[RMDB]
RNA sequence: GGGAACGACUCGAGUAGAGUCGAAAAUGCCUAAUUCAAGGAAUUAGCGUGCCUUCAUGCUAGGGGUUUGAUAUCUGCUAAAACCCGGUGCAUUCAUCAAUGCAGGUUAAGCCAAAGGGAUGUCCCGAAAAGAACGCAAGGUUCGCCUUGCGUUCAAGGUUAAGAUAUUGUUCGCAAUAUCUUAACCAAAAGAAACAACAACAACAAC
Reactivity to DMS in 0.01 (KOAc 150mM, MgCl2 10mM, bicine 150mM(pH8.5), 24C), signal-to-noise 3, nucleotides 027 to 156: u010g010c040c000u000a030a080u000u000c040a130a170g000g010a070a060u000u010a040g020c050g020u000g000c030c010u000u000c070a100u000g020c050u000a180g010g010g010g010u000u000u000g010a140u000a040u000c050u000g020c060u010a110a040a020a070c020c000c000g040g070u000g000c000a090u000u010c070a120u010c110a120a170u010g020c010a040g000g020u000u000a080a100g000c010c030a060a090a120g010g000g000a120u010g010u010c010c010c000g010a040a070a080a200g010a030a010c010g020c010a010a030g010g020u000u010c300g000c000c000u000u010g010c000g070u000u010c000a020a050
Reactivity to 2A3 in 0.01 (KOAc 150mM, MgCl2 10mM, bicine 150mM(pH8.5), 24C), signal-to-noise 7, nucleotides 027 to 156: u140g020c000c000u030a040a040u060u050c110a150a110g120g030a060a050u020u010a020g030c060g030u040g050c010c020u040u110c050a050u130g010c010u080a050g000g020g000g010u010u020u030g060a060u050a090u120c070u110g070c050u090a010a020a050a060c000c010c000g020g030u040g000c010a040u010u130c020a080u070c060a110a080u090g000c010a010g080g020u070u100a050a000g030c020c020a070a040a030g030g000g010a040u070g090u100c000c000c010g020a030a050a010a040g010a000a000c000g000c010a000a000g010g000u040u060c100g060c050c000u000u000g000c000g000u000u000c000a000a010
Chemical mapping of a 207-nucleotide RNA with DMS and 2A3. The data come from the RNA Mapping Database (RMDB), library M2RFPK. 2A3 adducts were read by reverse transcription with SuperScript II with manganese. For DMS the reverse transcriptase was MarathonRT. Conditions: 150 mM KOAc, 10 mM MgCl2 and 150 mM bicine (pH 8.5), 24 C. The DMS profile rests on 9,784 reads.